[RMDB]
RNA sequence: GGGAACGACUCGAGUAGAGUCGAAAACGAAUAUCAAAUAUGGACAUCCGCUCGAUAGAUCCGCGAGUGAAUACCUGUCAGGAUAAAUAUAUAUCUGGCGAUCAAUACUCAAUAUAUCAGCAUACUGAUUUUGAUCCUUACUUUGAUCUAUCAACAGAUAUCAGUCUGCAUUCGUGCAGACUGAUAUAAAAGAAACAACAACAACAAC
Reactivity to DMS in 0.01 (KOAc 150mM, MgCl2 10mM, bicine 150mM(pH8.5), 24C), signal-to-noise 1, nucleotides 027 to 156: c040g000a080a090u000a090u010c070a110a140a230u010a110u000g000g010a090c040a090u010c010c040g010c040u000c080g010a230u000a060g000a040u000c000c120g040c030g000a040g000u010g000a080a070u000a040c040c040u000g030u010c020a140g000g020a110u010a040a090a150u000a140u000a090u020a050u010c010u010g010g000c050g060a060u020c010a040a110u010a070c190u010c000a000a040u000a030u000a070u000c120a040g020c160a100u000a000c030u000g010a040u010u000u000u000g000a000u000c000c020u010u020a080c150u000u000u000g020a050u010c040u000a020u000c010a110a110c040a120g000
Reactivity to 2A3 in 0.01 (KOAc 150mM, MgCl2 10mM, bicine 150mM(pH8.5), 24C), signal-to-noise 4, nucleotides 027 to 156: c010g030a080a030u150a020u220c060a070a040a040u170a080u130g020g010a020c010a070u020c040c050g000c070u030c020g030a020u030a060g070a030u060c040c060g050c060g040a020g010u030g020a050a050u080a100c030c030u040g030u010c020a010g000g050a030u090a120a240a000u190a040u070a010u000a050u080c020u010g050g010c020g000a020u080c030a050a030u070a180c080u030c060a080a020u030a010u010a020u130c010a020g050c040a020u070a160c050u050g050a070u100u100u070u070g030a030u000c010c020u060u110a070c050u120u050u090g000a000u030c030u070a080u050c050a030a090c010a040g140

Conditions: 150 mM KOAc, 10 mM MgCl2 and 150 mM bicine (pH 8.5), 24 C. Chemical mapping of a 207-nucleotide RNA with DMS and 2A3. The 2A3 profile rests on 1,884 reads. It was measured as part of the RMDB library OK3TST.